[RMDB]
RNA sequence: GGGAACGACUCGAGUAGAGUCGAAAACUUCACUGGCGAUUUCGCCCUCCUGGGAUUGCCGGCGCUGGUUCAGAUCGCCGGUGUGGCGGCCGUGAUCACCUCCCUGCUGCUGGUGGACCGCGUGGGCACGGGGACUGACCUUCGGGUCAGUCCCCGUAAAAGAAACAACAACAACAAC
Reactivity to 2A3 in 0.01 (KOAc 150mM, MgCl2 10mM, bicine 150mM(pH8.5), 24C), signal-to-noise 1, nucleotides 027 to 126: c080u160u110c080a030c000u080g120g000c040g080a110u050u050u050c110g030c000c020c000u080c000c000u110g110g000g140a280u150u180g000c000c000g020g000c010g000c050u180g100g000u070u160c000a030g010a030u140c010g040c050c000g010g000u050g000u020g060g020c060g030g000c000c000g090u070g000a080u190c000a010c030c060u000c020c000c000u020g010c070u100g000c000u080g030g020u200g050g040a080c050c000g030c030g000u070g070g000g040c000